[RMDB]
Background
Structure probing data (2A3) for a 207-nucleotide construct. The data come from the RNA Mapping Database (RMDB), library M2RFPK. For 2A3 the reverse transcriptase was SuperScript II with manganese. The reactions ran in a buffer of 150 mM KOAc, 10 mM MgCl2 and 150 mM bicine (pH 8.5), at 24 C.
RNA sequence: GGGAACGACUCGAGUAGAGUCGAAAAACUAAUCCAAAGCAAGUAUAGGAGAACAGGUUUUUAACUAUUUUUAGGCAGAUAAAAAGUAGUAUUUGACAGUCUAACACUAACUGAACAAUAAGUGUUAAAAAGUCGUCUCUGUUCGCAGAGACGACAACAUGUGUGCAGACUUCGGUCUGCACACAUGAAAAGAAACAACAACAACAAC
Reactivity to 2A3 in 0.01 (KOAc 150mM, MgCl2 10mM, bicine 150mM(pH8.5), 24C), signal-to-noise 1, nucleotides 027 to 156: a010c040u080a100a020u060c010c010a050a010a000g000c030a040a000g000u050a020u080a170g030g010a040g040a070a030c130a260g060g080u040u010u010u020u080a060a020c030u040a040u020u000u040u000u030a040g030g040c050a010g040a110u080a100a040a000a010a000g100u020a000g010u000a050u010u030u040g010a010c000a000g000u010c000u000a000a000c000a000c000u000a030a000c000u020g010a030a000c000a000a000u000a010a000g000u000g000u000u020a000a040a000a000a000g010u000c000g010u010c000u020c010u000g040u040u080c160g020c040a000g000a000g000a000c000g000a000c000a000a000